[RMDB]
RNA sequence: GGGAACGACUCGAGUAGAGUCGAAAAGGCAUGGAACUCCGCGAAGCAGGCCGACGCCCUGAACUCUCAGAAGUUCGAACAGCAGCUAUCCAAUGCAGGACGCCUCGGCAGUAUCGCGGCGUCGGCAGUGUAAGUACGGAUUCGUCCGUACUUACACAAAAGAAACAACAACAACAAC
Reactivity to 2A3 in 0.01 (KOAc 150mM, MgCl2 10mM, bicine 150mM(pH8.5), 24C), signal-to-noise 5, nucleotides 027 to 126: g030g010c040a040u110g060g030a060a040c010u000c040c020g010c020g030a040a020g070c080a050g130g010c000c000g000a000c000g020c000c010c000u020g010a020a010c000u020c010u010c070a140g070a240a010g180u030u040c040g040a120a060c040a070g040c010a000g010c020u110a070u100c050c030a100a080u110g030c010a030g010g030a010c010g010c020c020u030c010g020g000c020a030g050u080a070u200c020g010c020g000g000c000g000u010c010g010g000c010a010
Reactivity to DMS in 0.01 (KOAc 150mM, MgCl2 10mM, bicine 150mM(pH8.5), 24C), signal-to-noise 8, nucleotides 027 to 126: g010g010c040a050u010g020g010a090a070c040u000c010c020g010c070g010a080a300g010c090a100g010g030c010c020g000a070c060g010c030c000c020u000g010a030a040c020u000c030u010c160a110g000a060a080g010u000u000c020g000a060a090c170a090g010c040a050g010c080u000a110u010c100c110a070a100u000g010c040a070g010g010a050c030g010c100c070u000c040g010g020c120a080g010u000a080u000c030g020c200g010g000c030g010u000c010g000g010c010a090

Chemical mapping of a 177-nucleotide RNA with 2A3 and DMS. High DMS reactivity at an A or C suggests that its Watson-Crick edge is free. The data come from the RNA Mapping Database (RMDB), library OK2TST.